Chemical mapping of a 177-nucleotide RNA with DMS and 2A3. The reactions ran in a buffer of 150 mM KOAc, 10 mM MgCl2 and 150 mM bicine (pH 8.5), at 24 C. DMS (dimethyl sulfate) methylates the pairing face of unpaired adenines and cytosines.

RNA sequence: GGGAACGACUCGAGUAGAGUCGAAAAGUCGGCCAACGGCUGCGAGCCUUGCUGGACCCAGAUCGUGCCGGCGAACACCGGUGGCCGCAGCGCACCGACCCCCGGCUGAUGAAUCCCGAUGGCUAGCCCAAUUAAUGGACUUCGGUCCAUUAAUUGGAAAAGAAACAACAACAACAAC
Reactivity to DMS in 0.01 (KOAc 150mM, MgCl2 10mM, bicine 150mM(pH8.5), 24C), signal-to-noise 3, nucleotides 027 to 126: g030u010c000g010g020c020c020a070a090c110g010g010c040u000g010c020g020a120g010c000c020u010u000g010c030u000g020g000a160c120c130c060a110g000a100u000c040g010u000g000c010c080g010g010c030g010a080a070c170a070c020c010g000g010u010g010g000c010c000g010c030a030g030c020g020c080a080c060c030g010a200c020c010c000c010c010g010g000c030u000g000a080u000g010a110a140u000c000c010c010g000a100u010g010g010c040u000a060g010c220
Reactivity to 2A3 in 0.01 (KOAc 150mM, MgCl2 10mM, bicine 150mM(pH8.5), 24C), signal-to-noise 3, nucleotides 027 to 126: g020u020c010g000g020c050c050a090a050c090g140g000c040u030g010c000g020a080g030c030c020u100u240g050c060u100g130g110a250c050c040c020a030g010a140u110c010g050u050g030c000c010g020g000c000g030a110a080c140a050c050c020g010g050u020g000g010c000c040g000c010a000g020c030g050c050a090c060c060g180a180c020c010c000c000c000g010g000c000u030g030a070u040g010a040a100u010c020c010c030g040a090u120g100g000c040u060a030g010c000